[RMDB]
RNA sequence: GGGAACGACUCGAGUAGAGUCGAAAAAGAUCAAAUCACCUGGCAUGAUCUGGGACAGCGACAUCUUGGGGACAGAGAUGGGCCAGGAAGGAGGGGGCAGAGAGCUAGAGAUGGAGACCCACCACGGAAUUACUCGACUGUUCGCAGUCGAGUAAUUAAAAGAAACAACAACAACAAC
Reactivity to DMS in 0.01 (KOAc 150mM, MgCl2 10mM, bicine 150mM(pH8.5), 24C), signal-to-noise 1, nucleotides 027 to 126: a070g000a090u000c010a050a050a200u000c080a110c010c050u000g020g020c060a160u000g010a020u000c050u010g000g000g020a070c060a040g010c060g020a100c020a080u000c040u000u000g000g000g000g000a150c050a120g010a040g000a030u000g000g010g030c040c050a020g000g030a120a110g000g000a090g020g000g000g000g000c090a040g030a090g000a060g010c020u000a080g010a090g000a080u000g010g040a060g020a090c060c010c010a060c120c080a100c110g010g000